RNA sequence: GGGAACGACUCGAGUAGAGUCGAAAAGAAAAUAGGGAUAAGAGUUGAACAGGUGCAAAGUGAAUAAGUAAAUUAUGAAAGUUCAGGGUUGACCAACAACCACACCAAGAUUAUUAACUUAUCAAAUACUUGCUAUUGUGUUCGCACAAUAGCAAGUAAAAGAAACAACAACAACAAC
Reactivity to 2A3 in 0.01 (KOAc 150mM, MgCl2 10mM, bicine 150mM(pH8.5), 24C), signal-to-noise 3, nucleotides 027 to 126: g160a010a120a040a120u260a010g090g040g000a000u010a020a000g000a000g020u000u000g040a040a060c130a300g000g000u000g000c000a150a300a000g050u030g010a000a020u000a010a000g020u020a000a000a080u280u240a180u220g010a030a030a000g010u010u020c000a000g000g000g000u000u000g020a060c030c000a030a080c010a000a000c010c000a020c000a000c000c000a020a000g000a020u010u060a040u090u220a180a090c000u000u020a000u030c020a000a110a000u020
Reactivity to DMS in 0.01 (KOAc 150mM, MgCl2 10mM, bicine 150mM(pH8.5), 24C), signal-to-noise 1, nucleotides 027 to 126: g050a110a030a130a170u090a100g000g000g060a080u000a030a000g000a080g000u000u010g020a000a000c300a020g000g000u000g000c000a000a050a020g000u030g000a060a000u000a000a110g010u000a000a000a300u070u000a030u000g000a020a190a210g010u000u000c000a000g000g000g120u000u030g000a020c090c080a090a140c020a000a000c000c000a000c020a000c090c000a020a030g000a020u000u000a050u020u000a110a180c000u000u010a010u000c070a050a160a140u000